[RMDB]
RNA sequence: GGGAACGACUCGAGUAGAGUCGAAAAGAUAUGGAAAUAUUACCUUAAGAGAUAACUCUCGGAAACGAGAGUUGGAAGUUAACGGUACUGUAUUUCCUAAGUCAAAACACGCAAGUUCGCUUGCGUGGUAACACUUCCUGUUCGCAGGAAGUGUUACAAAAGAAACAACAACAACAAC
Reactivity to 2A3 in 0.01 (KOAc 150mM, MgCl2 10mM, bicine 150mM(pH8.5), 24C), signal-to-noise 3, nucleotides 027 to 126: g010a000u040a020u060g000g010a010a010a000u030a020u030u040a030c010c000u130u100a300a100g300a030g000a300u010a030a010c000u000c000u010c000g000g000a010a030a000c010g000a000g000a000g010u000u000g010g000a040a010g050u230u300a080a020c150g010g020u030a090c100u140g040u030a030u000u000u000c000c000u000a040a000g010u000c030a000a000a170a110c010a000c000g000c000a000a000g020u090u110c240g100c230u000u000g000c000g000u010g010
Reactivity to DMS in 0.01 (KOAc 150mM, MgCl2 10mM, bicine 150mM(pH8.5), 24C), signal-to-noise 6, nucleotides 027 to 126: g000a020u000a280u000g000g000a010a020a000u000a010u000u000a010c000c000u000u010a110a090g020a090g010a300u030a000a010c000u000c000u000c020g020g010a040a050a070c010g010a010g010a020g000u000u000g000g000a140a130g000u000u010a020a040c260g000g000u000a010c300u000g040u000a010u000u000u000c000c000u000a040a150g010u000c040a090a100a070a300c000a010c000g020c000a000a020g010u000u010c270g020c000u000u000g000c000g020u000g010